[RMDB]
RNA sequence: GGGAACGACUCGAGUAGAGUCGAAAACACCGCAAGUGCAACCGGGCCAAGUCAGACAAGCCGCCCACGUGGCGGCCCGGCGUCACGUUUGUGACUGAGAGACGGUGGAGCGCGUAGUGAUCGAGGUCGACGGCAUCAAGACGUUCAGCAACAAGCACGAGUAAAUCCAAUUCGUUGGAUUUACUCGAAAAGAAACAACAACAACAAC
Reactivity to 2A3 in 0.01 (KOAc 150mM, MgCl2 10mM, bicine 150mM(pH8.5), 24C), signal-to-noise 3, nucleotides 027 to 156: c040a020c010c010g040c070a070a040g060u040g040c010a020a040c020c010g020g000g000c020c000a100a040g070u060c030a020g000a270c050a090a040g030c030c010g050c000c040c010a150c140g070u160g000g010c000g000g000c000c000c000g000g010c020g030u020c000a030c050g050u060u160u260g000u010g060a020c030u040g040a050g000a010g020a150c030g000g020u030g030g020a050g000c060g000c010g040u030a050g030u020g060a090u050c040g030a020g030g050u020c020g010a030c050g020g000c000a030u050c030a010a100g040a040c010g000u050u060c070a040g040c030a030a060c020a100a050g090c170a040
Reactivity to DMS in 0.01 (KOAc 150mM, MgCl2 10mM, bicine 150mM(pH8.5), 24C), signal-to-noise 1, nucleotides 027 to 156: c010a130c010c020g000c010a050a140g030u000g030c060a040a040c020c000g030g000g000c000c050a110a110g010u000c040a090g000a150c060a070a130g040c010c000g040c020c000c050a110c200g030u000g040g040c040g000g040c020c030c020g000g000c060g010u000c020a030c030g000u000u000u000g010u000g020a080c050u010g010a220g020a150g010a060c000g030g020u020g000g030a090g010c010g010c070g000u000a080g000u000g020a060u000c030g020a120g040g000u000c010g000a060c010g000g000c040a190u010c060a070a100g020a080c010g010u000u000c080a080g010c020a050a070c050a020a060g000c040a150
The data come from the RNA Mapping Database (RMDB), library OK3TST. The record gives the reactivity of an RNA of 207 nucleotides to 2A3 and DMS. High DMS reactivity at an A or C suggests that its Watson-Crick edge is free. Reactivities are rounded to 0.1 and cut off at 0 and 3. Reactivities are given for positions 27 through 156.